[RMDB]
RNA sequence: GGGAACGACUCGAGUAGAGUCGAAAAACGAGCGAGGUACGCCUCGCUCGAAGUGGGCGGGGGCAGGUGUGUGGUGGGUGGUGGCCUGCGGUGAGCAGGGCCCUCACACCUGCCUCGCCCCCCAGAAGUAUUUUGGUGCGUUCGCGCACCAAAAUACAAAAGAAACAACAACAACAAC
Reactivity to 2A3 in 0.01 (KOAc 150mM, MgCl2 10mM, bicine 150mM(pH8.5), 24C), signal-to-noise 1, nucleotides 027 to 126: a010c000g010a000g000c000g000a010g050g100u160a110c280g130c070c000u020c020g000c000u020c000g000a000a000g070u090g000g000g000c080g060g000g080g110g040c000a000g000g000u010g000u060g010u080g100g070u220g030g110g070u190g000g060u090g020g070c000c000u020g020c000g020g070u300g040a020g000c000a000g060g000g000c000c000c000u000c000a000c000a000c000c000u000g000c010c000u000c000g000c000c010c000c000c000c000a040g040a140a010